[RMDB]
An RNA of 170 nucleotides, treated with DMS and 2A3 and read out base by base.
High 2A3 reactivity points to a flexible backbone, as in loops and unpaired stretches.
The DMS profile rests on 13,666 reads.
The reactions ran in a buffer of 150 mM KOAc, 10 mM MgCl2 and 150 mM bicine (pH 8.5), at 24 C.

RNA sequence: GGGAACGACUCGAGUAGAGUCGAAAAGAACCCUCGAUCCUUUAUUGGGGGGUACACUCGAGGAGUGGAAGGCGGGUAGGGGGGACCCCAGGGUCAACCUACGGAAAUCCCUGAGUUCCUCGGAUGUUAGGGUCGAAGUUCGCUUCGACCAAAAGAAACAACAACAACAAC
Reactivity to DMS in 0.01 (KOAc 150mM, MgCl2 10mM, bicine 150mM(pH8.5), 24C), signal-to-noise 4, nucleotides 027 to 129: g000a050a140c040c030c030u010c030g000a080u050c130c060u010u020u020a090u040u050g000g020g020g020g040g000u050a000c080a040c040u030c000g020a000g050g020a070g020u050g000g000a180a050g000g000c300g010g040g010u020a000g000g000g010g010g020g010a060c020c000c030c080a120g040g060g030u000c010a090a060c010c010u030a000c000g020g000a030a110a080u020c080c010c010u000g020a250g010u000u000c000c000u020c060g000g000a110u030g050u030u060a090g020
Reactivity to 2A3 in 0.01 (KOAc 150mM, MgCl2 10mM, bicine 150mM(pH8.5), 24C), signal-to-noise 6, nucleotides 027 to 129: g010a000a010c000c000c000u010c030g060a120u130c000c080u180u250u260a140u170u150g020g000g000g000g020g020u020a020c030a010c030u020c000g020a010g020g000a010g010u100g020g190a040a030g040g050c100g000g070g040u030a020g010g020g000g010g060g020a000c000c020c010c020a100g070g000g000u000c030a020a020c010c000u060a020c030g020g020a040a080a040u060c000c000c000u010g000a000g070u010u000c000c000u020c020g010g000a010u010g030u070u080a070g070